[RMDB]
RNA sequence: GGGAACGACUCGAGUAGAGUCGAAAAUGUUUGUGACAUAGCAGUCAGUUGCCAUGGAGAUGAUUGCUUUAUCACCAACUCCUCUUUGCAAUGACUUCACAGCAAGGUUAUGGAGAAGCAGAUGGGCACUUUCUAGGCCGUUCGCGGCCUAGAAAGUAAAAGAAACAACAACAACAAC
Reactivity to 2A3 in 0.01 (KOAc 150mM, MgCl2 10mM, bicine 150mM(pH8.5), 24C), signal-to-noise 1, nucleotides 027 to 126: u160g060u000u080u000g000u000g000a020c020a010u030a000g020c020a000g020u010c000a010g010u140u120g180c090c110a130u270g060g050a030g090a060u020g000a000u030u030g000c000u010u000u000a090u000c000a000c000c090a010a000c050u050c010c010u000c000u040u040u060g000c010a140a130u050g040a030c080u060u030c110a110c040a050g030c010a130a180g000g080u040u000a050u300g100g000a120g040a070a050g000c100a060g000a110u090g030g010g000c130
Reactivity to DMS in 0.01 (KOAc 150mM, MgCl2 10mM, bicine 150mM(pH8.5), 24C), signal-to-noise 1, nucleotides 027 to 126: u030g020u000u000u000g050u010g070a020c010a020u030a050g000c040a000g030u030c000a040g010u050u010g000c070c160a000u110g030g000a060g070a130u040g000a050u000u000g060c050u020u000u010a100u000c030a030c030c180a030a030c030u000c040c030u000c100u040u000u030g030c060a110a150u000g030a000c150u000u010c000a120c080a110g000c100a000a000g000g040u050u030a040u030g080g030a080g000a010a170g000c030a030g010a040u000g080g040g000c170
The data come from the RNA Mapping Database (RMDB), library RFM100. The record gives the reactivity of an RNA of 177 nucleotides to 2A3 and DMS. For 2A3 the reverse transcriptase was SuperScript II with manganese. 2A3 is a SHAPE reagent: it acylates the 2'-hydroxyl of flexible nucleotides of all four kinds.